[RMDB]
Notes
This 177-nucleotide RNA was probed chemically with 2A3 and DMS. The reactions ran in a buffer of 150 mM KOAc, 10 mM MgCl2 and 150 mM bicine (pH 8.5), at 24 C. The 2A3 profile rests on 2,370 reads. Reactivities are given for positions 27 through 126.

RNA sequence: GGGAACGACUCGAGUAGAGUCGAAAAGAUAUGGAAGCAAUGGGAGGCGAUGAGAUGGAUCGGAAACGAUCCAUCGAGCCUCCAUCGCUUCCUAAGUCAAAGUCAAACUGCUUCGGCAGUUUGACAAGCGUACCGUAAUGUUCGCAUUACGGUACGCAAAAGAAACAACAACAACAAC
Reactivity to 2A3 in 0.01 (KOAc 150mM, MgCl2 10mM, bicine 150mM(pH8.5), 24C), signal-to-noise 1, nucleotides 027 to 126: g070a040u110a060u120g000g010a020a020g020c030a040a010u170g150g290g130a060g070g020c070g240a300u210g060a040g000a030u000g000g000a010u060c000g010g020a140a060a020c010g000a020u000c040c020a000u000c010g030a000g000c000c000u050c000c000a000u000c010g010c010u000u000c000c010u020a110a010g020u000c110a120a050a060g000u000c010a000a000a000c000u020g010c020u080u070c120g200g000c010a000g000u000u030u000g020a000c000a000a010
Reactivity to DMS in 0.01 (KOAc 150mM, MgCl2 10mM, bicine 150mM(pH8.5), 24C), signal-to-noise 1, nucleotides 027 to 126: g020a090u040a300u000g000g000a010a000g030c020a100a040u000g000g010g000a020g010g020c020g030a120u010g000a300g020a030u000g000g010a020u000c010g000g010a110a090a160c000g020a010u000c000c000a020u000c000g010a130g010c010c000u000c000c000a010u000c020g050c000u000u000c000c000u000a020a100g000u000c040a030a150a170g010u010c010a000a000a010c000u000g010c000u000u040c260g020g020c000a020g000u000u000u010g010a000c020a080a060